[RMDB]
RNA sequence: GGGAACGACUCGAGUAGAGUCGAAAAGAUAUGGACCUUAAUGGGAGAAUACUAUCGGAAACGAUAGGAUAUUCGAGGAUCAUUAGUCCUAAGUCGCGACCGUAUCUACGUUCGCGUAGAUACGGAACCUCUGUCUUAAGUUCGCUUAAGACAGAGGAAAAGAAACAACAACAACAAC
Reactivity to DMS in 0.01 (KOAc 150mM, MgCl2 10mM, bicine 150mM(pH8.5), 24C), signal-to-noise 5, nucleotides 027 to 126: g000a020u000a010u010g000g000a020c000c100u010u000a010a010u000g000g000g010a010g010a030a010u000a120c000u000a010u000c010g020g010a000a000a010c000g010a010u010a010g000g000a200u010a020u000u000c000g010a060g010g000a020u010c000a010u000u000a010g000u000c000c000u010a000a120g000u000c010g000c230g000a220c010c000g000u010a000u000c000u000a000c000g000u000u010c240g020c010g030u000a000g010a020u000a010c000g010g000a030a050
Reactivity to 2A3 in 0.01 (KOAc 150mM, MgCl2 10mM, bicine 150mM(pH8.5), 24C), signal-to-noise 6, nucleotides 027 to 126: g000a000u010a000u040g010g000a020c060c270u070u040a000a010u010g010g000g000a010g010a010a000u020a070c000u000a000u000c000g000g000a010a000a000c010g010a010u010a020g040g050a060u060a020u230u010c020g070a270g010g010a000u010c000a010u000u010a000g000u010c000c000u010a000a000g000u010c010g010c060g140a060c000c000g000u000a000u000c000u000a010c010g030u040u080c300g010c000g160u010a000g000a000u000a000c000g000g000a000a010

The record gives the reactivity of an RNA of 177 nucleotides to DMS and 2A3. It was measured as part of the RMDB library TTRDEL. For DMS the reverse transcriptase was MarathonRT.